[RMDB]
RNA sequence: GGGAACGACUCGAGUAGAGUCGAAAAAUUUUGAAGAACAUUUGGUUCCUUAUCAUGGUGAUCCUAUAGCGUAUUCUCGCGAAUUGGCUGUAGGUAAAGCCGAGUCUAUAGUGAAGGAUCAUCAUCCGUAACAGAGUUGUUUCGACAACUCUGUUACAAAAGAAACAACAACAACAAC
Reactivity to 2A3 in 0.01 (KOAc 150mM, MgCl2 10mM, bicine 150mM(pH8.5), 24C), signal-to-noise 3, nucleotides 027 to 126: a000u130u180u080u190g120a160a080g060a090a010c030a040u060u040u220g050g000u000u050c020c000u090u140a080u160c090a030u060g000g000u010g030a000u010c010c010u080a080u160a230g030c000g020u030a020u000u040c050u020c020g040c080g100a190a230u080u100g090g010c020u060g110u300a200g020g110u100a120a040a010g000c030c020g000a010g010u010c040u020a040u020a150g000u030g060a080a010g010g020a000u010c010a010u040c000a010u040c010c110
Reactivity to DMS in 0.01 (KOAc 150mM, MgCl2 10mM, bicine 150mM(pH8.5), 24C), signal-to-noise 3, nucleotides 027 to 126: a060u010u010u000u000g020a140a100g010a110a100c100a070u000u000u010g020g000u000u000c000c020u000u010a090u030c160a050u010g000g040u000g010a020u000c000c000u000a100u000a300g020c000g000u000a020u000u000c030u000c030g010c170g010a070a120u010u000g000g010c010u000g020u010a050g010g020u010a050a090a060g010c060c020g010a030g010u010c010u000a050u000a090g020u000g000a190a170g000g010a020u000c000a010u000c020a000u000c270c130
The record gives the reactivity of an RNA of 177 nucleotides to 2A3 and DMS. The 2A3 profile rests on 1,865 reads. For DMS, 2,857 sequencing reads were counted. DMS adducts were read by reverse transcription with MarathonRT.